RNA sequence: GGGAACGACUCGAGUAGAGUCGAAAAGUGAGAACGUUCGCGUUCUCACAAAUACUAAGACCGAAGCUUAGAUGGCCGACACUUCCCUUGGAAACGGCACAUAAAUGAUAGGUUUCGACCUAUCAAAGCAUAAAUAGAGCUUCGGCUCUAUUUAUGCAAAAGAAACAACAACAACAAC
Reactivity to 2A3 in 0.01 (KOAc 150mM, MgCl2 10mM, bicine 150mM(pH8.5), 24C), signal-to-noise 4, nucleotides 027 to 126: g000u010g000a010g000a000a000c000g010u040u070c180g000c010g090u000u010c030u000c020a000c000a010a000a000u100a020c010u020a010a020g020a020c020c060g090a070a010g030c010u040u050a020g020a120u090g080g000c010c010g030a030c010a020c100u030u010c020c020c000u000u070g070g020a040a100a010c010g000g090c050a020c010a210u260a070a120a070u090g000a000u000a000g000g000u020u040u120c190g090a030c000c000u000a000u000c000a010a010a020
Reactivity to DMS in 0.01 (KOAc 150mM, MgCl2 10mM, bicine 150mM(pH8.5), 24C), signal-to-noise 3, nucleotides 027 to 126: g020u010g000a020g000a020a000c000g030u000u000c260g020c000g020u000u000c010u000c000a000c000a010a050a070u010a160c050u000a020a020g000a120c030c040g000a020a070g000c010u000u000a010g000a140u000g000g020c000c000g010a100c120a100c100u010u000c010c000c020u000u000g020g000a070a060a170c010g010g010c020a080c150a060u000a050a100a090u010g000a020u000a000g010g000u000u000u010c200g000a020c000c000u000a000u000c020a030a040a080
Source information: Conditions: 150 mM KOAc, 10 mM MgCl2 and 150 mM bicine (pH 8.5), 24 C. Structure probing data (2A3 and DMS) for a 177-nucleotide construct. DMS adducts were read by reverse transcription with MarathonRT. The 2A3 profile rests on 5,797 reads. 2A3 adducts were read by reverse transcription with SuperScript II with manganese.